The record gives the reactivity of an RNA of 207 nucleotides to 2A3 and DMS.
The data come from the RNA Mapping Database (RMDB), library OK3TST.
For 2A3, 2,743 sequencing reads were counted.
2A3 adducts were read by reverse transcription with SuperScript II with manganese.
Values cover nucleotides 27 to 156.
The reactions ran in a buffer of 150 mM KOAc, 10 mM MgCl2 and 150 mM bicine (pH 8.5), at 24 C.

RNA sequence: GGGAACGACUCGAGUAGAGUCGAAAAAUCUAUGACCUGAACUCAGCCGUGGGUGAUGUGGCCUGGGCGCCAUACUCUUCUACUGUGUUCGCAGCAGUCACCACAGAUGGGAAGGUGAGUGCCAGCGUCCUGACUUCACUGAGUCCCUACUGGAGAACAGUAUAGUGGGGUUCGCCCCACUAUACUGAAAAGAAACAACAACAACAAC
Reactivity to 2A3 in 0.01 (KOAc 150mM, MgCl2 10mM, bicine 150mM(pH8.5), 24C), signal-to-noise 4, nucleotides 027 to 156: a000u140c120u110a120u120g090a080c030c000u030g060a030a030c000u020c050a030g100c100c050g070u060g000g030g030u050g020a090u050g030u050g000g010c000c030u070g030g080g040c050g010c040c000a050u070a130c040u050c030u080u010c000u030a040c010u040g010u010g030u090u160c050g010c010a030g040c010a010g090u060c020a030c050c000a020c020a030g130a170u170g030g030g040a020a030g030g030u070g020a030g010u040g050c050c060a040g000c030g040u040c000c020u060g050a070c020u050u040c050a010c030u020g010a030g080u030c000c000c010u050a090c030u040g060g020a060g030a100a010
Reactivity to DMS in 0.01 (KOAc 150mM, MgCl2 10mM, bicine 150mM(pH8.5), 24C), signal-to-noise 1, nucleotides 027 to 156: a100u010c090u010a120u010g000a070c030c030u010g000a110a160c000u010c020a080g000c060c050g030u000g000g030g040u000g000a140u000g080u000g020g020c020c050u020g070g020g040c040g000c030c040a030u000a050c030u000c040u010u010c020u000a170c010u040g030u000g000u000u020c120g050c010a070g000c110a100g030u010c060a100c100c010a030c040a050g010a150u000g020g040g000a100a200g040g010u020g030a080g010u000g020c050c060a090g020c080g020u000c040c010u010g000a050c000u000u000c060a090c040u000g020a290g000u000c020c010c020u010a200c060u000g030g000a200g010a160a250